Notes: Structure probing data (DMS and 2A3) for a 207-nucleotide construct. The RNA was probed in 150 mM KOAc, 10 mM MgCl2 and 150 mM bicine (pH 8.5) at 24 C. 2A3 adducts were read by reverse transcription with SuperScript II with manganese. The DMS profile rests on 7,925 reads. The data come from the RNA Mapping Database (RMDB), library OK3TST. DMS adducts were read by reverse transcription with MarathonRT.
RNA sequence: GGGAACGACUCGAGUAGAGUCGAAAAGAUCAGUUAUUGGAUUAAAAUCCGGAACGUAUAGUUUGAUAAUUCAUCGUUACGGAGAUAUUAGUCGAGGAUGUGAUUCCAUAGGCAGUCCAGAAAUAUUUAUCGGUAACAUCUUUGUAAACAGAUAUGGAUCAUACACUAUCUUCGGAUAGUGUAUGAUAAAAGAAACAACAACAACAAC
Reactivity to DMS in 0.01 (KOAc 150mM, MgCl2 10mM, bicine 150mM(pH8.5), 24C), signal-to-noise 4, nucleotides 027 to 156: g020a080u000c060a100g010u000u000a040u010u000g000g000a160u000u000a060a070a120a190u000c000c020g040g000a020a020c020g020u010a080u010a070g030u000u010u010g020a170u000a050a090u000u010c090a130u000c010g030u000u000a030c010g010g000a040g000a120u000a080u000u000a100g030u000c010g020a160g000g020a080u000g030u000g000a150u000u010c020c050a100u000a100g010g010c050a100g000u000c060c050a190g010a060a090a080u000a050u000u000u000a030u000c020g010g010u000a080a020c020a030u000c020u010u010u000g010u000a080a070a100c070a110g020a100u000a050u000g010g010
Reactivity to 2A3 in 0.01 (KOAc 150mM, MgCl2 10mM, bicine 150mM(pH8.5), 24C), signal-to-noise 5, nucleotides 027 to 156: g010a020u070c060a010g020u030u050a040u100u140g090g000a010u080u130a050a050a020a090u020c020c010g030g000a010a000c010g100u200a050u120a190g070u100u070u200g150a100u150a240a080u130u080c050a010u040c010g000u000u010a000c000g040g020a030g000a020u060a060u090u120a040g040u020c050g020a090g010g010a010u020g030u060g140a080u170u000c020c030a010u030a010g070g000c040a010g060u030c010c000a020g080a020a060a000u100a050u050u130u050a030u020c010g010g000u010a020a010c000a020u020c030u000u050u100g100u130a070a100a060c040a040g090a110u080a040u180g070g000